[RMDB]
RNA sequence: GGGAACGACUCGAGUAGAGUCGAAAACGGUAGGUUUGCGGGUGGCCUACCGGAGGGCGUCAGAGACACCCGCUCGGGCUACUCGGUCGCACGGGGCUGAGUAGCUGACACCUAACCCGUGCUACCCUCGGGGAGCUUGCCCGUGGGCGACCCGAGGCUUAAAGUCUACCUUCGGGUAGACUUUAAGAAAAGAAACAACAACAACAAC
Reactivity to 2A3 in 0.01 (KOAc 150mM, MgCl2 10mM, bicine 150mM(pH8.5), 24C), signal-to-noise 1, nucleotides 027 to 156: c010g000g000u020a010g000g000u000u030u150g000c000g000g010g010u010g000g000c010c000u000a000c010c010g020g010a040g030g110g070c140g080u170c130a050g050a030g020a160c000a010c000c000c000g000c000u000c020g000g000g000c010u000a000c000u000c000g000g000u010c030g000c000a000c010g000g000g000g000c000u000g000a000g000u000a000g000c000u000g000a000c000a080c010c040u140a100a060c000c000c000g010u000g000c000u020a020c000c000c010u000c000g000g000g000g000a010g010c020u040u040g100c050c050c030g070u210g060g010g000c010g010a010c010c000c000g000a000g000g000